[RMDB]
RNA sequence: GGGAACGACUCGAGUAGAGUCGAAAACCGGGAAUGCUCAGCGUGCGCUGACCAUUAGUGACGUAAUCUAUCUCUCCGGUAACCACAACGAUGCAGUCUAUCUGACGCGCCAGCGCCUGCGCCGCAGGAGCCUCGCAGUCUUCGGACUGCGAGGCUCAAAAGAAACAACAACAACAAC
Reactivity to 2A3 in 0.01 (KOAc 150mM, MgCl2 10mM, bicine 150mM(pH8.5), 24C), signal-to-noise 2, nucleotides 027 to 126: c000c000g000g030g010a200a050u090g010c030u030c040a000g040c030g080u300g080c060g000c110u040g040a070c000c000a060u090u160a020g060u000g090a040c120g050u040a030a060u020c000u010a060u050c000u100c000u000c040c000g000g020u070a070a070c060c000a040c020a060a130c010g010a050u140g000c000a030g090u000c000u130a130u080c080u110g020a040c020g000c020g000c030c000a040g010c020g030c060c000u110g010c050g020c030c040g090c000a000g120
An RNA of 177 nucleotides, treated with 2A3 and read out base by base.
The reactions ran in a buffer of 150 mM KOAc, 10 mM MgCl2 and 150 mM bicine (pH 8.5), at 24 C.
Values are in units of 0.01, from 0 to 300, in steps of 10.
Source: RMDB library OK1LIB, as collected in RNAgym.
Values cover nucleotides 27 to 126.